Structure probing data (2A3 and DMS) for a 177-nucleotide construct. The data come from the RNA Mapping Database (RMDB), library TTRDES.
[RMDB]
RNA sequence: GGGAACGACUCGAGUAGAGUCGAAAAGAUAUGGACACAGAAGAGCAACAGCUUACGCUCGGAAACGAGCGUUAAGACAUGCUCCCCUGUGUCCUAAGUCAAACAAAGGAACUUCGGUUCCUUUGAAGAGCAAGAUAAAGUUCGCUUUAUCUUGCUCAAAAGAAACAACAACAACAAC
Reactivity to 2A3 in 0.01 (KOAc 150mM, MgCl2 10mM, bicine 150mM(pH8.5), 24C), signal-to-noise 5, nucleotides 027 to 126: g000a000u020a000u060g000g010a000c000a000c000a020g070a110a010g000a040g040c110a110a210c090a230g000c010u010u010a000c000g000c010u020c010g000g050a000a010a000c000g010a000g000c010g030u090u200a010a000g020a020c060a260u300g000c000u000c000c010c000c010u000g020u020g000u000c000c000u000a000a010g000u000c000a070a080a090c010a010a010a000g000g000a000a000c020u060u120c300g210g000u010u040c000c000u000u000u000g000a050a000
Reactivity to DMS in 0.01 (KOAc 150mM, MgCl2 10mM, bicine 150mM(pH8.5), 24C), signal-to-noise 4, nucleotides 027 to 126: g000a020u000a090u010g000g000a010c000a000c000a010g000a040a050g010a010g010c000a120a070c210a140g000c000u000u000a020c000g000c000u010c000g020g010a020a020a060c000g020a010g010c000g000u010u000a000a000g000a020c050a300u010g010c000u000c000c050c050c000u000g030u000g000u000c000c000u000a000a050g000u010c000a200a110a290c030a010a000a000g010g010a030a010c000u000u020c250g040g000u000u000c000c000u000u000u000g000a070a110